An RNA of 177 nucleotides, treated with 2A3 and DMS and read out base by base. 2A3 adducts were read by reverse transcription with SuperScript II with manganese. For 2A3, 680 sequencing reads were counted. DMS adducts were read by reverse transcription with MarathonRT. It was measured as part of the RMDB library M2PK90. The reactions ran in a buffer of 150 mM KOAc, 10 mM MgCl2 and 150 mM bicine (pH 8.5), at 24 C.

RNA sequence: GGGAACGACUCGAGUAGAGUCGAAAAUAAAUUAUAAAAGCUGAGAUGAGCUCAGCAAGGGUAUUUUUCGAUGGCGAAAGCCUCGUUCCCUAUCCCUUGCUCCGGAAACGGUAGCUUUUUCACAUAAGUUAAUCACUACAUUCGUGUAGUGAUUAACAAAAGAAACAACAACAACAAC
Reactivity to 2A3 in 0.01 (KOAc 150mM, MgCl2 10mM, bicine 150mM(pH8.5), 24C), signal-to-noise 1, nucleotides 027 to 126: u020a020a000a000u280u190a130u120a280a230a000a030g000c010u020g050a010g010a170u280g180a110g110c010u000c020a000g000c000a010a000g020g000g000u000a000u010u020u040u020u000c010g050a020u040g010g050c000g040a080a040a000g010c000c000u030c000g050u010u010c040c000c000u000a050u200c000c020c000u000u000g000c000u010c000c000g000g020a060a070a040c000g000g010u080a020g030c000u080u020u000u070u110c150a150c050a130u140a140a100
Reactivity to DMS in 0.01 (KOAc 150mM, MgCl2 10mM, bicine 150mM(pH8.5), 24C), signal-to-noise 2, nucleotides 027 to 126: u020a010a050a020u000u020a150u020a100a050a070a080g030c010u010g020a030g030a300u020g010a250g040c020u000c020a010g000c000a020a010g010g000g000u000a120u000u000u000u000u010c000g000a050u010g010g010c000g000a100a110a160g020c000c000u000c020g010u000u000c010c000c010u000a230u010c000c000c020u000u010g010c010u010c030c010g010g020a110a070a050c000g030g000u010a000g000c020u010u010u000u000u010c120a050c170a040u010a110a160